An RNA of 177 nucleotides, treated with DMS and read out base by base. It was measured as part of the RMDB library TTRDEL. The reactions ran in a buffer of 150 mM KOAc, 10 mM MgCl2 and 150 mM bicine (pH 8.5), at 24 C. For DMS the reverse transcriptase was MarathonRT.

RNA sequence: GGGAACGACUCGAGUAGAGUCGAAAAGAUAUGGAUCGGGGGAGCUUGACCAUCGGAAACGAUGGGAGAGCGACGAUCCACGAUCCUAAGUCAAAGAGGAAUAGCAGCUUCGGCUGCUAUUCCUCAAGGAAAAGAUAGACUUCGGUCUAUCUUUUCCAAAAGAAACAACAACAACAAC
Reactivity to DMS in 0.01 (KOAc 150mM, MgCl2 10mM, bicine 150mM(pH8.5), 24C), signal-to-noise 2, nucleotides 027 to 126: g010a040u000a300u000g000g000a000u000c010g000g010g000g000g020a070g010c000u000u030g000a300c000c000a000u000c000g010g000a130a120a160c000g030a000u000g010g000g000a300g030a000g000c000g000a030c280g000a040u000c000c000a040c000g000a020u000c010c000u000a070a120g000u000c030a070a100a190g010a010g010g000a010a010u000a010g000c010a010g000c000u000u060c220g000g010c000u010g000c000u000a000u000u000c000c000u000c000a000a020